[RMDB]
The data come from the RNA Mapping Database (RMDB), library M2PK90. Chemical mapping of a 177-nucleotide RNA with DMS and 2A3. For DMS the reverse transcriptase was MarathonRT. For DMS, 756 sequencing reads were counted. The RNA was probed in 150 mM KOAc, 10 mM MgCl2 and 150 mM bicine (pH 8.5) at 24 C.
RNA sequence: GGGAACGACUCGAGUAGAGUCGAAAAAACAGCUGCACGUACGUACGAGCAGUUUUCGAUAUAAACGUACGUACGAAAUAAAUAAAUUCUACUCGAUGCGAAACAAAGCAAAGUCGUUCCCAGGGAAACUCUAUCCCGUAUUCGUACGGGAUAGAGUAAAAGAAACAACAACAACAAC
Reactivity to DMS in 0.01 (KOAc 150mM, MgCl2 10mM, bicine 150mM(pH8.5), 24C), signal-to-noise 1, nucleotides 027 to 126: a080a120c180a160g000c100u000g000c160a160c000g000u000a000c050g000u000a000c000g040a110g010c180a100g000u030u000u000u000c300g040a130u000a040u000a010a110a090c050g020u000a000c000g000u000a050c000g000a030a030a230u000a000a030a030u000a040a080a040u010u000c000u000a000c000u000c000g020a110u000g010c000g000a060a080a150c300a100a090a160g000c040a170a300a050g050u000c000g000u000u000c000c000c000a000g040g000g000a200a050
Reactivity to 2A3 in 0.01 (KOAc 150mM, MgCl2 10mM, bicine 150mM(pH8.5), 24C), signal-to-noise 1, nucleotides 027 to 126: a000a000c090a000g130c080u140g010c070a000c030g000u000a010c010g000u010a000c000g030a040g060c070a030g010u020u000u050u160c030g000a020u050a010u100a220a140a020c030g010u000a000c010g010u020a000c010g000a000a000a030u120a000a040a000u140a020a040a000u010u000c000u010a000c000u000c000g020a030u080g030c030g050a150a130a030c120a040a110a000g000c000a000a160a000g010u000c000g010u000u000c000c000c010a000g000g000g000a000a050